[RMDB]
Source: RMDB library OK3TST, as collected in RNAgym. This 207-nucleotide RNA was probed chemically with DMS and 2A3. 2A3 adducts were read by reverse transcription with SuperScript II with manganese. Conditions: 150 mM KOAc, 10 mM MgCl2 and 150 mM bicine (pH 8.5), 24 C. Reactivities are given for positions 27 through 156.
RNA sequence: GGGAACGACUCGAGUAGAGUCGAAAACUUUCACGGAUUAGUCAGCUCGAAGCUCGGGGAAAGCGAAACGCUUGCGCUUUUCUCUCAAGCCGUUGACGCGGCACACGAAUCAUAUUCAGACGAAUAGCAACUCUUCAGGAAGGAGGGCGCGAGAUGGUCGAGCGUGUAAUUUCGAUUACACGCUCGAAAAAGAAACAACAACAACAAC
Reactivity to DMS in 0.01 (KOAc 150mM, MgCl2 10mM, bicine 150mM(pH8.5), 24C), signal-to-noise 1, nucleotides 027 to 156: c060u010u010u000c030a050c120g010g000a130u000u000a050g010u000c090a180g030c020u000c010g020a180a140g000c050u020c050g010g020g000g010a030a010a030g010c000g030a160a090a090c200g060c140u010u000g000c000g050c010u010u000u000u000c000u010c010u000c100a010a110g050c040c030g000u010u010g020a260c060g020c070g000g000c010a110c080a140c070g020a130a060u030c010a090u000a170u000u000c040a160g000a140c090g030a070a100u000a070g000c070a090a030c030u000c080u000u020c030a100g000g010a090a130g010g010a100g010g030g010c000g000c010g000a020g020a050u000g030g000
Reactivity to 2A3 in 0.01 (KOAc 150mM, MgCl2 10mM, bicine 150mM(pH8.5), 24C), signal-to-noise 4, nucleotides 027 to 156: c030u110u140u100c060a040c070g060g040a070u050u130a070g050u060c030a030g010c030u050c100g080a150a020g030c020u040c040g000g000g020g020a010a060a010g000c020g040a110a130a100c220g040c130u060u150g020c010g000c000u010u080u010u020c030u000c010u020c050a070a020g000c010c020g000u020u130g070a060c080g000c000g020g000c040a020c000a010c120g080a040a050u080c040a060u070a070u180u100c030a030g050a180c050g030a110a030u040a050g020c040a040a120c030u030c010u190u140c060a040g000g060a050a020g020g010a040g000g000g000c020g000c010g030a030g030a080u080g040g050